[RMDB]
Annotation: Structure probing data (2A3 and DMS) for a 207-nucleotide construct. The reactions ran in a buffer of 150 mM KOAc, 10 mM MgCl2 and 150 mM bicine (pH 8.5), at 24 C. The 2A3 profile rests on 5,833 reads. It was measured as part of the RMDB library OK3TST.
RNA sequence: GGGAACGACUCGAGUAGAGUCGAAAAGCGGACGCGAAGCAAUUACACCCAUCCCAUUACUCACUCCUUAUCCCAUCCCAGAGUGAGGGAUGGCAUAACUGCAGCCUUGGAUGGGAGUGAGUUCUGUGUCCUAUGUGUCCUGGUGUAUCAGCAUCCACGAUUGAGUUCAAUUCGUUGAACUCAAUCGAAAAGAAACAACAACAACAAC
Reactivity to 2A3 in 0.01 (KOAc 150mM, MgCl2 10mM, bicine 150mM(pH8.5), 24C), signal-to-noise 6, nucleotides 027 to 156: g070c050g000g040a020c010g020c060g100a050a010g050c070a050a080u160u080a070c050a060c010c020c010a040u040c010c020c010a030u040u060a010c000u010c000a000c010u030c010c000u060u300a030u050c000c010c010a010u020c010c010c010a090g050a090g220u150g110a150g070g000g000a010u010g040g000c010a060u200a200a070c110u120g010c040a040g080c030c080u120u150g010g000a000u000g010g000g000a000g000u000g000a010g000u020u000c000u000g040u010g010u040c000c030u060a090u120g110u030g030u030c020c040u040g000g030u020g010u020a090u100c050a010g040c010a050u030c030c040a030
Reactivity to DMS in 0.01 (KOAc 150mM, MgCl2 10mM, bicine 150mM(pH8.5), 24C), signal-to-noise 2, nucleotides 027 to 156: g010c070g000g040a030c040g120c030g030a110a180g000c060a120a100u010u000a090c060a060c070c010c040a120u020c000c040c030a190u010u000a060c030u010c000a020c020u000c000c000u000u000a070u020c040c010c030a120u000c010c000c020a140g030a220g020u020g010a140g010g000g010a020u000g030g000c010a050u000a090a130c160u000g030c050a060g020c060c140u030u000g010g000a070u000g030g010g030a050g040u000g000a070g000u000u000c060u010g000u000g000u000c000c020u010a070u000g020u000g030u000c050c010u030g040g000u000g000u010a130u000c080a140g010c030a080u000c000c020a220